[RMDB]
RNA sequence: GGGAACGACUCGAGUAGAGUCGAAAACUGAGUAGCUGGGACUACAGGCGCCUGUCACUACGCCAGUCUAAUUUUUUCUUGUAUUUUUAGUAGAGAUGGGGUUUCACCGUGUUAGCCAGGAUGGUCUCAAUUUCCUGACCUUGUGAUCCACCCUCAGCAACGUAACGUCAUUCGUGACGUUACGUUGAAAAGAAACAACAACAACAAC
Reactivity to 2A3 in 0.01 (KOAc 150mM, MgCl2 10mM, bicine 150mM(pH8.5), 24C), signal-to-noise 2, nucleotides 027 to 156: c050u060g040a000g030u060a000g050c030u060g090g050g040a100c020u050a040c100a080g080g000c050g060c040c020u110g010u060c020a000c050u020a020c040g050c040c010a060g070u060c040u090a100a240u060u080u040u030u130u060c030u000u090g020u110a280u050u200u020u060u170a060g040u010a020g000a000g000a080u130g050g000g000g050u020u060u080c040a020c010c040g020u010g010u050u120a020g030c000c000a000g040g020a060u020g070g050u050c040u000c070a090a120u080u110u010c010c000u020g020a040c000c000u030u090g010u030g080a000u010c010c010a100c020c000c000u030c010a020g040
Conditions: 150 mM KOAc, 10 mM MgCl2 and 150 mM bicine (pH 8.5), 24 C. This 207-nucleotide RNA was probed chemically with 2A3. Values are in units of 0.01, from 0 to 300, in steps of 10. The data come from the RNA Mapping Database (RMDB), library OK3TST. For 2A3 the reverse transcriptase was SuperScript II with manganese.